[RMDB]
RNA sequence: GGGAACGACUCGAGUAGAGUCGAAAAGAUAUGGACGCAGAUAAGGAUUGUGCGUAACAUCGGAGUCGGAAACGACUCCGUGGCACUUGAUUUCUGGUCCUAAGUCAAAGCCUAGUUCGCUAGGCAACCUAAUAUGAACCUUCGGGUUCAUAUUAGGAAAAGAAACAACAACAACAAC
Reactivity to DMS in 0.01 (KOAc 150mM, MgCl2 10mM, bicine 150mM(pH8.5), 24C), signal-to-noise 7, nucleotides 027 to 126: g010a040u000a300u010g000g010a010c010g010c000a020g010a040u010a030a050g000g010a190u000u000g000u000g010c010g010u000a040a080c160a040u010c000g010g000a030g010u000c000g020g000a110a070a180c000g010a020c000u000c000c000g020u000g000g010c000a010c000u000u000g000a300u000u000u000c000u010g010g000u000c000c010u000a030a090g010u000c030a120a100a130g020c000c000u000a000g010u000u020c230g020c010u000a000g000g010c020a030a040
Reactivity to 2A3 in 0.01 (KOAc 150mM, MgCl2 10mM, bicine 150mM(pH8.5), 24C), signal-to-noise 7, nucleotides 027 to 126: g030a010u070a040u140g010g020a040c090g040c300a000g050a070u240a260a060g210g040a060u070u080g010u010g010c040g040u070a080a070c060a230u240c030g000g000a000g000u000c020g020g000a040a060a040c010g000a000c000u000c000c010g000u000g010g000c000a000c000u050u040g050a060u040u050u010c010u010g000g010u000c010c000u010a130a030g020u030c060a130a080a000g000c000c000u010a010g000u050u110c300g020c150u010a000g000g000c000a000a010
An RNA of 177 nucleotides, treated with DMS and 2A3 and read out base by base.
Conditions: 150 mM KOAc, 10 mM MgCl2 and 150 mM bicine (pH 8.5), 24 C.
The DMS profile rests on 10,809 reads.
For 2A3, 19,536 sequencing reads were counted.